The data come from the RNA Mapping Database (RMDB), library M2RFPK.
Chemical mapping of a 207-nucleotide RNA with DMS and 2A3.
Reactivities are rounded to 0.1 and cut off at 0 and 3.
RNA sequence: GGGAACGACUCGAGUAGAGUCGAAAAAUUAAAAAAUUAAGCAAAAGACAACCACCUUGCCCGCUGACAAUAGCGUUAUCCCUCUGCACUUCGGUAAUAUGAGGGCACAGUAAAUCCCGCAAGGAUGAUGAUCAACAGGGGUUCGCCCCUGUUGAAAACAUCAUUGUAUGUUCGCAUACAAUGAUGUAAAAGAAACAACAACAACAAC
Reactivity to DMS in 0.01 (KOAc 150mM, MgCl2 10mM, bicine 150mM(pH8.5), 24C), signal-to-noise 1, nucleotides 027 to 156: a150u020u000a000a070a060a020a060a140u000u000a080a090g000c010a120a070a130a170g000a130c040a060a050c010c020a070c020c040u000u020g030c000c100c040g000c050u000g010a180c120a020a080u000a040g030c050g030u010u010a120u000c000c000c000u000c010u000g000c070a040c080u000u020c200g020g030u000a070a080u000a110u000g000a040g000g020g020c060a020c040a070g050u000a020a050a030u000c030c030c030g030c080a020a030g000g020a090u000g010a140u000g010a220u000c010a010a000c000a010g000g000g030g000u000u000c300g010c030c000c000c000u010g000u000u000g000a020a030a060
Reactivity to 2A3 in 0.01 (KOAc 150mM, MgCl2 10mM, bicine 150mM(pH8.5), 24C), signal-to-noise 2, nucleotides 027 to 156: a020u110u060a040a040a020a010a000a070u140u230a110a060g020c020a050a110a110a010g060a150c070a080a090c080c010a000c000c000u000u010g000c000c030c000g000c010u000g040a050c080a110a110u060a140g010c010g020u020u080a110u180c000c040c000u000c000u010g020c020a000c030u030u080c190g100g010u070a080a030u140a100u290g010a030g000g020g010c040a010c000a020g020u030a020a000a100u010c010c010c010g000c000a000a000g050g000a000u080g010a000u030g000a000u010c000a000a000c000a010g000g050g000g000u010u060c170g120c010c000c000c000u000g000u000u020g030a000a010a000